[RMDB]
RNA sequence: GGGAACGACUCGAGUAGAGUCGAAAAGAUAUGGAUACAGGCAACAGCCUACUGACCUCGGAAACGAGGUUUAGGACAUGCCUGAAUCCUAAGUCAAAAGUAUUACUCUCUUCGGAGAGUAAUACAACUUAUCGUCGACGUUCGCGUCGACGAUAAGAAAAGAAACAACAACAACAAC
Reactivity to DMS in 0.01 (KOAc 150mM, MgCl2 10mM, bicine 150mM(pH8.5), 24C), signal-to-noise 1, nucleotides 027 to 126: g000a030u000a250u050g010g020a030u000a170c000a000g000g030c000a000a090c270a150g000c040c000u000a060c300u000g020a000c000c000u000c000g010g010a050a040a130c000g030a000g000g010u000u000u030a000g000g030a110c120a100u030g020c020c000u000g000a110a000u000c000c000u000a030a190g000u000c010a090a080a190a230g000u000a000u030u000a000c000u000c000u000c000u010u020c230g070g000a010g020a000g020u000a000a000u000a010c000a020a070
An RNA of 177 nucleotides, treated with DMS and read out base by base. It was measured as part of the RMDB library TTRDEL. In probing experiments dimethyl sulfate is read out at A N1 and C N3, which are open when not base-paired. The DMS profile rests on 617 reads. DMS adducts were read by reverse transcription with MarathonRT. The reactions ran in a buffer of 150 mM KOAc, 10 mM MgCl2 and 150 mM bicine (pH 8.5), at 24 C.